RNA sequence: GGGAACGACUCGAGUAGAGUCGAAAAGGGGUCAGCCGAUGGUAGUAUAUUGUCAGCUCCGGAGGUCUGAAGCCUCCACGGACCACCGCGAGCUUGGAUUUAUAUACGAGAGUAGGCUGACGGAGGCACCCAAAACUAUCGUCUUCGGACGAUAGAACCAUCUAAUAUACUUCGGUAUAUUAGAUGGAAAAGAAACAACAACAACAAC
Reactivity to 2A3 in 0.01 (KOAc 150mM, MgCl2 10mM, bicine 150mM(pH8.5), 24C), signal-to-noise 2, nucleotides 027 to 156: g120g000g050g000u010c000a010g000c000c000g070a080u040g030g050u020a070g020u000a010u000a000u010u080g080u100c100a040g000c010u000c000c000g030g010a030g010g000u000c000u000g030a030a020g010c000c020u000c020c010a010c020g010g000a000c010c010a020c000c030g090c220g030a010g000c070u140u150g060g000a030u090u300u030a030u010a000u000a020c020g010a100g000a000g050u030a000g000g000c000u000g000a010c010g000g010a010g010g010c020a010c010c010c000a030a000a000a090c000u000a000u010c000g010u000c020u040u060c230g090g000a000c000g010a000u000a000g000a010a010
Reactivity to DMS in 0.01 (KOAc 150mM, MgCl2 10mM, bicine 150mM(pH8.5), 24C), signal-to-noise 1, nucleotides 027 to 156: g000g030g010g050u010c000a030g000c000c000g000a160u010g010g000u010a220g020u000a020u000a020u000u000g000u000c030a070g010c000u000c010c010g000g000a070g020g010u020c010u000g010a050a240g000c020c030u000c010c030a290c020g000g000a050c040c030a110c020c000g000c160g000a050g000c040u020u010g020g000a070u000u000u000a020u000a020u000a010c040g010a300g000a070g000u000a250g000g000c000u000g010a000c010g000g020a050g040g000c040a110c030c100c020a050a040a120a220c000u000a010u010c010g030u000c000u000u000c300g020g000a010c000g000a000u000a000g000a070a140
About this RNA: This 207-nucleotide RNA was probed chemically with 2A3 and DMS. 2A3 adducts were read by reverse transcription with SuperScript II with manganese. Values cover nucleotides 27 to 156. It was measured as part of the RMDB library RNAMAK. The RNA was probed in 150 mM KOAc, 10 mM MgCl2 and 150 mM bicine (pH 8.5) at 24 C.